[RMDB]
RNA sequence: GGGAACGACUCGAGUAGAGUCGAAAAUUAAAGAGUUUCCAUUAACAAAUCCAGUAAUUGCGAUCGGGAAUACAACCUCCCAUGUUGGUUGACUUAAAGGUUCCAUAGGAACCUGGAAGCUAAAAAACAUAUUUCAGAGAUUCGUCUCUGAAAUAUGAAAAGAAACAACAACAACAAC
Reactivity to DMS in 0.01 (KOAc 150mM, MgCl2 10mM, bicine 150mM(pH8.5), 24C), signal-to-noise 1, nucleotides 027 to 126: u000u040a100a030a170g020a180g000u010u000u000c000c000a150u010u010a100a100c050a060a140a100u000c020c070a060g010u010a040a080u000u010g000c100g000a090u000c150g010g000g000a020a100u010a130c040a010a090c040c010u010c000c000c000a150u010g030u000u010g010g000u010u000g020a070c060u010u000a060a080a030g010g000u000u000c000c000a150u010a250g010g010a000a010c000c010u010g000g000a000a010g010c070u010a000a020a070a060a040a130